Annotation:
Conditions: 150 mM KOAc, 10 mM MgCl2 and 150 mM bicine (pH 8.5), 24 C. Structure probing data (2A3 and DMS) for a 177-nucleotide construct. The DMS profile rests on 2,506 reads. For 2A3 the reverse transcriptase was SuperScript II with manganese. It was measured as part of the RMDB library OK2TRN.
[RMDB]
RNA sequence: GGGAACGACUCGAGUAGAGUCGAAAAGCGCAACCGGGGGAGUCGGCGCACCACCAUGUUGACCUUGACCUGUGCGCCCGGGGCCAGUGCCGCAACCGGUUCACCGAGCAGGCUGGCCAGCACCGCCCCUGCUCCUUUAAUUCGUUAAAGGAGCAGGAAAAGAAACAACAACAACAAC
Reactivity to 2A3 in 0.01 (KOAc 150mM, MgCl2 10mM, bicine 150mM(pH8.5), 24C), signal-to-noise 1, nucleotides 027 to 126: g030c040g010c070a050a050c000c000g000g010g020g040g000a070g040u050c020g000g000c020g040c020a040c020c010a020c040c020a090u100g020u110u170g140a100c060c040u080u080g060a110c000c030u040g020u010g020c000g010c000c020c030g050g000g000g000c010c000a050g040u120g300c010c040g020c030a080a100c070c010g030g050u150u120c130a180c090c030g000a010g000c020a000g000g060c000u000g020g030c020c010a020g030c020a020c020c000g040c040c030
Reactivity to DMS in 0.01 (KOAc 150mM, MgCl2 10mM, bicine 150mM(pH8.5), 24C), signal-to-noise 3, nucleotides 027 to 126: g010c060g000c080a110a100c050c040g010g000g000g010g010a080g010u010c060g010g000c030g020c040a050c050c180a110c070c050a080u000g000u000u000g020a080c070c020u000u000g020a080c060c060u000g010u000g010c020g020c010c020c050g040g000g010g030c020c040a040g010u000g010c050c020g000c050a100a100c090c020g010g000u000u000c140a070c050c010g000a060g000c040a070g000g000c010u000g000g000c030c010a090g020c090a130c060c080g010c070c050